Structure probing data (DMS and 2A3) for a 207-nucleotide construct. Conditions: 150 mM KOAc, 10 mM MgCl2 and 150 mM bicine (pH 8.5), 24 C. In probing experiments dimethyl sulfate is read out at A N1 and C N3, which are open when not base-paired. DMS adducts were read by reverse transcription with MarathonRT. The data come from the RNA Mapping Database (RMDB), library OK3TST. For 2A3, 725 sequencing reads were counted. For DMS, 3,773 sequencing reads were counted.
[RMDB]
RNA sequence: GGGAACGACUCGAGUAGAGUCGAAAAGCAGUGGAAAUUACCUUUUAAGGUAUUUGAACACGUUGGACAAGCCCACACUCAAACCUAAUGUGUACUGGAGAAAGUAUAACAUGACCAUGCAUUCAUACACAUAUGCAUGUGUAGAUGCUAAAUAAAAAAUAUUAUGGACCUUCGGGUCCAUAAUAUUAAAAGAAACAACAACAACAAC
Reactivity to DMS in 0.01 (KOAc 150mM, MgCl2 10mM, bicine 150mM(pH8.5), 24C), signal-to-noise 2, nucleotides 027 to 156: g010c090a080g030u010g000g000a110a030a070u000u000a030c000c020u000u000u000u000a180a090g010g040u010a050u000u000u000g020a140a270c000a030c070g010u000u000g020g010a230c060a130a140g010c030c030c040a070c050a090c050u000c040a100a130a110c060c030u000a050a040u000g020u000g020u000a020c020u000g000g020a200g010a130a130a100g010u000a060u000a000a090c010a030u000g000a030c050c050a080u000g020c000a010u000u010c030a170u000a050c070a030c040a040u000a060u000g020c150a080u000g030u000g000u000a090g000a030u000g010c000u000a050a040a080u040a020a040a080a140
Reactivity to 2A3 in 0.01 (KOAc 150mM, MgCl2 10mM, bicine 150mM(pH8.5), 24C), signal-to-noise 2, nucleotides 027 to 156: g100c090a010g000u030g000g040a060a120a080u040u020a000c000c000u080u220u160u220a190a010g000g000u030a030u030u030u020g070a140a020c000a000c030g060u060u160g100g020a030c030a080a000g040c000c060c000a010c000a030c010u110c050a060a170a180c040c000u200a090a050u030g010u000g000u010a010c030u020g070g000a120g090a090a050a000g080u020a010u000a100a030c010a040u020g070a030c080c030a030u070g000c000a000u050u090c030a090u090a050c020a000c000a010u040a000u210g140c080a030u030g020u030g010u030a000g000a010u020g000c030u000a070a140a070u140a060a090a050a030